[RMDB]
RNA sequence: GGGAACGACUCGAGUAGAGUCGAAAAAUAUAAAAAUAGAUGUACACGUUCAACGACUAGCGAGUGAUGUAAAUCAGUCAAAUAAUCUCGCCACGAGCGCCCGACAUCUUGAUAUUUACUUAGACCCUAUUGCGGCAAAUUUCGAUUUGCCGCAAUAAAAAGAAACAACAACAACAAC
Reactivity to DMS in 0.01 (KOAc 150mM, MgCl2 10mM, bicine 150mM(pH8.5), 24C), signal-to-noise 2, nucleotides 027 to 126: a000u020a040u000a000a000a050a070a120u050a010g000a000u000g010u000a120c190a100c030g000u000u010c000a170a220c150g000a080c100u010a160g000c000g000a000g020u000g000a050u000g010u010a000a050a140u040c220a130g060u060c060a050a070a060u010a250a090u030c000u000c000g010c010c020a070c110g000a000g000c010g030c160c090c180g000a080c020a000u030c000u020u020g000a050u000a020u000u000u010a000c180u050u000a100g000a110c020c000c000
Reactivity to 2A3 in 0.01 (KOAc 150mM, MgCl2 10mM, bicine 150mM(pH8.5), 24C), signal-to-noise 2, nucleotides 027 to 126: a000u040a010u090a010a070a020a000a020u180a030g000a000u030g020u000a020c030a000c030g010u030u040c030a090a030c180g170a060c130u100a010g000c000g000a000g030u090g010a020u020g070u100a140a150a120u180c130a020g180u040c040a000a000a080u150a020a060u150c000u000c020g000c000c000a060c140g000a010g000c010g000c030c210c060g020a000c000a000u010c030u000u000g010a000u000a050u060u110u010a040c110u080u120a030g150a160c010c000c000